[RMDB]
RNA sequence: GGGAACGACUCGAGUAGAGUCGAAAAGUGCAAAGGAUGAGCAGGGAACUGAAAACAUGAGGAAAAGUUGGCUAAGUUGACCCUUGGCUGGUACACAGUAAGCUCUGUUUUAGUGUUCGCAAUAAUACGAAGACAGUGAAAUAAAGAACAUGGCUUACAUACCGGAGGGGUUCGCCCCUCCGGUAUGAAAAGAAACAACAACAACAAC
Reactivity to 2A3 in 0.01 (KOAc 150mM, MgCl2 10mM, bicine 150mM(pH8.5), 24C), signal-to-noise 2, nucleotides 027 to 156: g120u090g020c010a020a010a100g050g030a040u040g050a020g040c060a060g040g000g010a040a030c040u080g030a090a020a000a000c050a100u150g010a030g040g020a060a040a050a070g080u100u060g030g000c020u020a060a010g040u040u060g050a060c000c000c000u060u060g030g000c030u040g030g010u120a080c120a010c010a060g060u140a100a020g010c020u000c010u030g040u030u060u040u070a040g010u020g040u040u000c020g000c110a000a040u110a180a030u120a050c050g030a050a000g020a030c030a000g040u040g130a050a110a010u220a090a130a030g060a010a020c060a070u070g030g000c010u010u010a020
Reactivity to DMS in 0.01 (KOAc 150mM, MgCl2 10mM, bicine 150mM(pH8.5), 24C), signal-to-noise 1, nucleotides 027 to 156: g000u020g000c080a000a110a060g060g000a080u000g000a040g070c050a060g000g010g050a090a210c070u010g000a110a090a140a100c000a130u010g020a110g020g020a120a040a040a110g010u010u000g000g000c020u020a030a110g020u000u020g010a100c040c040c010u000u000g010g010c040u020g010g040u020a090c090a040c100a120g010u000a020a070g070c000u010c080u020g010u000u000u000u000a050g000u000g010u000u000c020g040c100a080a080u000a080a090u010a010c080g010a020a080g000a050c030a060g010u000g000a040a050a090u020a090a050a000g030a020a040c010a140u010g000g010c010u000u030a140

Chemical mapping of a 207-nucleotide RNA with 2A3 and DMS. Conditions: 150 mM KOAc, 10 mM MgCl2 and 150 mM bicine (pH 8.5), 24 C. For 2A3 the reverse transcriptase was SuperScript II with manganese. Values cover nucleotides 27 to 156. For DMS the reverse transcriptase was MarathonRT.